[RMDB]
RNA sequence: GGGAACGACUCGAGUAGAGUCGAAAAGACGCGAAGUCGAGGCCACCGGCAGCCACCCCUUUAUGAAGUUCGAAGGCUGGACUCCCUUGGCGCAGUUGAAGGUUGGUGACCGGAUCGCAGCACCGCGAUAAUAAAGUGAAUUCGUUCACUUUAUUAUAAAAGAAACAACAACAACAAC
Reactivity to 2A3 in 0.01 (KOAc 150mM, MgCl2 10mM, bicine 150mM(pH8.5), 24C), signal-to-noise 9, nucleotides 027 to 126: g070a020c030g020c050g120a110a010g040u070c020g010a060g010g050c010c020a050c030c010g030g030c020a020g030c010c000a030c010c020c000c010u030u120u050a210u180g110a120a040g040u080u110c070g030a080a030g060g000c050u060g030g030a080c040u060c010c010c000u020u060g040g000c020g000c040a040g010u070u080g070a080a030g070g010u070u060g020g020u030g030a040c000c010g010g020a030u070c040g000c030a020g020c010a030c040c030g030c020g010
Reactivity to DMS in 0.01 (KOAc 150mM, MgCl2 10mM, bicine 150mM(pH8.5), 24C), signal-to-noise 9, nucleotides 027 to 126: g010a060c040g010c060g010a090a110g010u010c040g010a110g000g000c010c030a080c030c020g000g000c070a140g010c040c030a120c040c030c010c040u010u020u020a080u020g010a090a120g010u010u010c050g010a110a090g010g010c060u010g000g000a100c050u010c030c020c020u010u010g000g010c050g020c060a090g010u010u000g000a090a070g010g010u010u000g000g010u010g000a130c040c020g000g000a080u010c040g000c030a080g010c080a090c050c020g010c070g010
An RNA of 177 nucleotides, treated with 2A3 and DMS and read out base by base. 2A3 adducts were read by reverse transcription with SuperScript II with manganese. Reactivities are given for positions 27 through 126. Source: RMDB library OK1LIB, as collected in RNAgym.